[RMDB]
RNA sequence: GGGAACGACUCGAGUAGAGUCGAAAAGUGCGCUGCUAUACAGGAGUCAUUCGUAUCGUGUGAUGCAGAUUUUGUUGCGUACGUGAUCUCUCACUCCUGGGAGAUCUUUCAUAUAGCACGAAAGAAAGGGAUAACUAUAGUUCGCUAUAGUUAUCCCAAAAGAAACAACAACAACAAC
Reactivity to 2A3 in 0.01 (KOAc 150mM, MgCl2 10mM, bicine 150mM(pH8.5), 24C), signal-to-noise 4, nucleotides 027 to 126: g020u030g000c010g010c010u070g020c010u030a020u030a130c030a040g030g010a010g030u040c060a120u160u120c100g020u200a080u060c020g020u020g040u040g010a040u040g010c020a000g010a060u060u060u080u100g060u020u070g000c000g000u010a030c020g010u050g000a010u000c000u000c000u000c020a000c040u030c000c020u000g000g000g000a000g000a000u010c000u000u010u000c000a000u030a010u000a050g020c010a000c040g040a040a030a050g160a050a100a040
Reactivity to DMS in 0.01 (KOAc 150mM, MgCl2 10mM, bicine 150mM(pH8.5), 24C), signal-to-noise 6, nucleotides 027 to 126: g000u000g000c010g010c020u010g000c030u010a090u030a070c050a060g010g010a030g000u010c090a170u030u030c170g000u010a060u010c010g010u030g020u020g000a080u010g000c030a060g000a150u010u010u000u010g000u010u000g020c020g030u010a020c070g000u020g010a010u000c000u000c000u000c060a060c120u020c180c120u010g000g000g000a010g010a010u000c010u000u000u000c040a090u010a060u020a070g020c040a040c050g010a060a100a100g010a090a100a110
Conditions: 150 mM KOAc, 10 mM MgCl2 and 150 mM bicine (pH 8.5), 24 C. The record gives the reactivity of an RNA of 177 nucleotides to 2A3 and DMS. The DMS profile rests on 14,894 reads. The data come from the RNA Mapping Database (RMDB), library OK1LIB.